RNA sequence: GGGAACGACUCGAGUAGAGUCGAAAAGUUGCAAUUUACUAUCAGAAGUGUCUGCCUUAUUUUAUUUCUUGUGUUACUGUAACUCAUGAGUAUCAUUCAUUAUUCUUUACAAUACAACUGUAAGUCAUGCCUAUUGUCGGUUCGCCGACAAUAGGCAAAAAGAAACAACAACAACAAC
Reactivity to 2A3 in 0.01 (KOAc 150mM, MgCl2 10mM, bicine 150mM(pH8.5), 24C), signal-to-noise 1, nucleotides 027 to 126: g020u020u020g000c000a090a110u150u220u300a140c020u100a080u170c060a020g000a080a170g000u020g000u040c080u000g000c000c060u040u290a230u040u250u020u060a140u000u000u020c120u000u120g000u000g000u040u040a060c000u000g020u000a000a170c000u000c060a000u290g000a000g020u120a000u290c080a060u070u220c000a000u000u170a300u030u030c170u140u140u000a060c040a000a160u100a140c000a000a080c000u120g000u080a000a000g000u020c060a040
Structure probing data (2A3) for a 177-nucleotide construct. It was measured as part of the RMDB library OK1LIB. 2A3 adducts were read by reverse transcription with SuperScript II with manganese.